[RMDB]
RNA sequence: GGGAACGACUCGAGUAGAGUCGAAAAGAAGGAGAUGAAAGCGACUUUAGAAUCGGCUAACUGAGCAGACAGAUACAGACGGCAAGUAUCGUCGCCAGAGAUACAGUCGCAAAUAGCCGGAGGAGAACCUCAUAGUCCAGUUCGCUGGACUAUGAGGAAAAGAAACAACAACAACAAC
Reactivity to 2A3 in 0.01 (KOAc 150mM, MgCl2 10mM, bicine 150mM(pH8.5), 24C), signal-to-noise 3, nucleotides 027 to 126: g150a020a050g110g000a050g030a070u130g080a050a030a040g010c010g000a040c010u070u070u100a140g100a160a060u080c030g090g000c070u120a070a090c000u010g010a010g040c080a040g040a000c020a070g010a000u000a010c040a040g110a060c010g090g070c060a090a000g010u030a020u000c000g020u000c000g000c010c000a000g030a000g000a040u040a150c040a000g000u040c000g000c000a000a060a040u060a000g010c000c000g000g000a060g030g060a090g030a030a000
Reactivity to DMS in 0.01 (KOAc 150mM, MgCl2 10mM, bicine 150mM(pH8.5), 24C), signal-to-noise 2, nucleotides 027 to 126: g010a090a120g000g040a200g030a070u000g000a060a090a090g000c000g000a020c030u000u020u020a100g000a160a080u000c030g010g000c040u040a170a170c040u000g000a080g060c000a150g000a000c000a090g020a030u000a040c000a070g010a220c080g030g000c130a040a100g000u000a000u000c000g030u000c010g050c000c070a010g030a110g000a080u010a040c130a000g000u000c000g010c060a100a090a050u020a080g000c000c020g000g000a110g000g010a170g010a090a120